[RMDB]
RNA sequence: GGGAACGACUCGAGUAGAGUCGAAAACUCGGCAAAGGGCGGCAGUCCUCAGUGCUCUUACUCUUUCCUAUAAAGAGGAGACUGCUGGACUCGCCGCCCGAGCCCGAGCAUGGGCCCCAGUUCCGAAACCGAUAGCAGUUCGCUGCUAUCAAAAGAAACAACAACAACAAC
Reactivity to 2A3 in 0.01 (KOAc 150mM, MgCl2 10mM, bicine 150mM(pH8.5), 24C), signal-to-noise 9, nucleotides 027 to 129: c000u000c000g000g000c030a110a130a150g010g000g000c010g010g000c000a000g010u010c000c010u010c000a030g010u170g180c020u000c010u050u230a300c010u020c010u020u030u050c040c070u150a150u210a300a040a000g010a010g010g000a000g010a000c000u000g040c050u010g000g000a000c000u010c020g010c000c010g010c000c000c000g000a000g000c000c000c000g000a000g010c040a060u090g040g030g000c000c000c000c000a020g020u070u010c020c020g060a090a050a060c030c070
Reactivity to DMS in 0.01 (KOAc 150mM, MgCl2 10mM, bicine 150mM(pH8.5), 24C), signal-to-noise 9, nucleotides 027 to 129: c000u000c000g000g010c060a090a180a150g010g000g020c010g010g020c030a030g000u020c010c000u010c030a020g020u040g000c030u000c020u010u060a300c030u020c000u000u000u000c230c200u030a130u080a050a000a010g000a020g030g020a030g000a040c000u010g020c140u010g000g000a000c010u000c150g040c000c000g020c000c020c010g020a030g020c040c000c010g020a040g000c090a050u030g020g020g020c030c030c000c030a120g000u020u030c020c020g040a090a100a090c170c100